[RMDB]
RNA sequence: GGGAACGACUCGAGUAGAGUCGAAAAGGUAUUCUCCUUCGGGAGAAUACCAAAAAACCGUAGGACCUUUGAUCAAAUGUGUGACGGUUCGAAAGAGCCGAAUCACGAAUGGGAGGUCCUAAACGGAAAAACAAUGCCCUCUUCGGAGGGCAUUGAAUACGUAUUGAAAGUUCGCUUUCAAUACGUAAAAAGAAACAACAACAACAAC
Reactivity to DMS in 0.01 (KOAc 150mM, MgCl2 10mM, bicine 150mM(pH8.5), 24C), signal-to-noise 1, nucleotides 027 to 156: g020g050u000a000u000u000c000u000c010c000u010u010c300g080g000g000a020g010a050a010u000a030c000c000a000a050a060a080a040a060c010c010g060u000a060g020g000a060c010c000u000u000u000g020a150u000c070a050a100a180u020g020u010g000u020g000a300c010g020g000u010u020c020g000a120a160a190g000a010g020c000c010g000a010a180u000c000a040c010g000a060a150u000g010g030g000a000g010g020u000c010c000u000a000a010a070c030g030g000a020a040a050a080a190c000a020a020u010g000c000c000c020u000c000u000u000c300g020g020a010g010g020g020c000a000u010u000g010a110a160

Conditions: 150 mM KOAc, 10 mM MgCl2 and 150 mM bicine (pH 8.5), 24 C. An RNA of 207 nucleotides, treated with DMS and read out base by base. For DMS, 2,962 sequencing reads were counted. DMS (dimethyl sulfate) methylates the pairing face of unpaired adenines and cytosines. Source: RMDB library RNAMAK, as collected in RNAgym.